[RMDB]
Source information
Structure probing data (2A3 and DMS) for a 177-nucleotide construct.

RNA sequence: GGGAACGACUCGAGUAGAGUCGAAAAUGGGGCCAACUGCUUCAGGUAAAACAGAGCUUAGCAUAGAACUCGCGAAGCGUAUCAAUGGUGAAAUCAUAAGCGGUGAUUCUAUGCAAGUUUACAAACAUCACACCGAAGUAUUCGUACUUCGGUGUGAAAAAGAAACAACAACAACAAC
Reactivity to 2A3 in 0.01 (KOAc 150mM, MgCl2 10mM, bicine 150mM(pH8.5), 24C), signal-to-noise 1, nucleotides 027 to 126: u060g000g000g000g020c070c050a080a020c130u230g010c000u030u040c050a080g020g070u120a010a050a070a160c050a050g080a010g090c040u000u010a100g010c010a010u010a020g000a010a000c000u030c040g000c020g090a100a010g110c050g050u040a070u220c050a070a110u160g200g020u090g220a160a120a070u130c070a020u040a110a000g000c000g000g000u080g020a300u000u040c000u010a010u010g000c000a010a010g000u000u060u030a030c040a000a040a000c000a110
Reactivity to DMS in 0.01 (KOAc 150mM, MgCl2 10mM, bicine 150mM(pH8.5), 24C), signal-to-noise 2, nucleotides 027 to 126: u010g000g010g000g000c040c070a140a100c180u000g000c000u000u000c010a070g000g060u010a080a060a110a060c220a110g000a080g000c000u000u000a190g030c000a020u040a000g000a050a010c010u010c010g000c000g010a060a110g000c180g020u020a140u000c160a150a120u040g060g020u000g000a030a110a090u000c050a020u000a100a300g010c010g000g030u000g000a130u000u000c000u010a030u000g000c010a100a010g000u000u000u000a080c150a040a080a130c250a080

The data come from the RNA Mapping Database (RMDB), library OK2TST.
The RNA was probed in 150 mM KOAc, 10 mM MgCl2 and 150 mM bicine (pH 8.5) at 24 C.
The DMS profile rests on 782 reads.
For DMS the reverse transcriptase was MarathonRT.
The 2A3 profile rests on 851 reads.
For 2A3 the reverse transcriptase was SuperScript II with manganese.